Record summary:
The data come from the RNA Mapping Database (RMDB), library TTRDEL. The record gives the reactivity of an RNA of 177 nucleotides to DMS. DMS (dimethyl sulfate) methylates the pairing face of unpaired adenines and cytosines. For DMS the reverse transcriptase was MarathonRT. The RNA was probed in 150 mM KOAc, 10 mM MgCl2 and 150 mM bicine (pH 8.5) at 24 C. Values cover nucleotides 27 to 126.

RNA sequence: GGGAACGACUCGAGUAGAGUCGAAAAGAUAUGGAUGUGGCAAGGGAGCUGCUCGGAAACGAGCCAGCGAGGAUCUUGCACAUCCUAAGUCAAAAGUUGUAGCCAACCUUCGGGUUGGCUACAACAACACAUCCAUGGAGUUCGCUCCAUGGAUGUGAAAAGAAACAACAACAACAAC
Reactivity to DMS in 0.01 (KOAc 150mM, MgCl2 10mM, bicine 150mM(pH8.5), 24C), signal-to-noise 2, nucleotides 027 to 126: g010a040u000a300u030g010g010a010u000g040u000g000g010c010a010a020g000g010g000a050g030c000u000g000c000u010c000g000g000a070a090a180c000g020a020g010c180c070a000g020c000g010a060g000g010a010u000c000u000u010g000c000a010c000a000u000c000c000u000a010a040g020u010c030a110a090a080a110g010u000u000g010u000a000g000c000c000a010a010c000c010u000u010c180g010g020g010u000u000g000g020c000u000a000c000a000a000c000a130a220